RNA sequence: GGGAACGACUCGAGUAGAGUCGAAAAAGAUCCACGCUACGGCGUGGAUCACACGUUCAUCCCUAUGGGGACGGAAGUAGGCAUAGUGCCGAAGGAACGCAUUAGUCAUGCGCUACGGCGCAUGACACACAUCAGAGUCACUUCGGUGACUCUGAAAUCCUGUAAACUUGUUCGCAAGUUUACAGGAAAAAGAAACAACAACAACAAC
Reactivity to 2A3 in 0.01 (KOAc 150mM, MgCl2 10mM, bicine 150mM(pH8.5), 24C), signal-to-noise 2, nucleotides 027 to 156: a000g010a010u000c010c010a000c000g000c010u060a060c290g160g000c010g000u000g000g000a000u000c000a000c000a000c000g000u020u000c000a030u020c000c010c010u080a150u240g040g000g000g000a000c020g020g010a010a010g010u010a020g000g020c030a060u110a230g120u170g160c010c000g010a000a020g030g020a020a000c010g000c080a040u070u150a000g010u010c000a000u020g010c010g000c010u000a030c250g060g000c010g000c000a000u000g000a000c010a000c010a000c000a050u060c000a000g000a010g000u000c000a000c010u010u100c100g090g000u020g000a000c010u000c000u010g000a000a000a000
Reactivity to DMS in 0.01 (KOAc 150mM, MgCl2 10mM, bicine 150mM(pH8.5), 24C), signal-to-noise 2, nucleotides 027 to 156: a150g000a040u000c000c000a000c010g060c010u000a120c230g090g000c000g050u020g010g000a000u000c020a010c110a010c090g000u000u000c000a250u010c000c020c040u000a090u020g050g000g030g010a010c020g000g000a040a060g040u000a130g030g070c050a200u000a100g000u010g030c000c000g010a090a120g000g000a060a100c040g020c040a060u000u000a140g020u000c060a030u000g000c000g020c010u000a060c260g140g000c000g000c000a000u010g000a020c000a030c110a050c070a130u000c000a000g000a030g000u000c000a010c000u000u000c300g060g030u000g000a010c000u000c010u000g000a000a050a080
Chemical mapping of a 207-nucleotide RNA with 2A3 and DMS. The 2A3 profile rests on 1,879 reads. For DMS, 2,755 sequencing reads were counted. 2A3 adducts were read by reverse transcription with SuperScript II with manganese. As a SHAPE reagent, 2A3 marks flexible, mostly unpaired nucleotides at the ribose 2'-OH. High DMS reactivity at an A or C suggests that its Watson-Crick edge is free.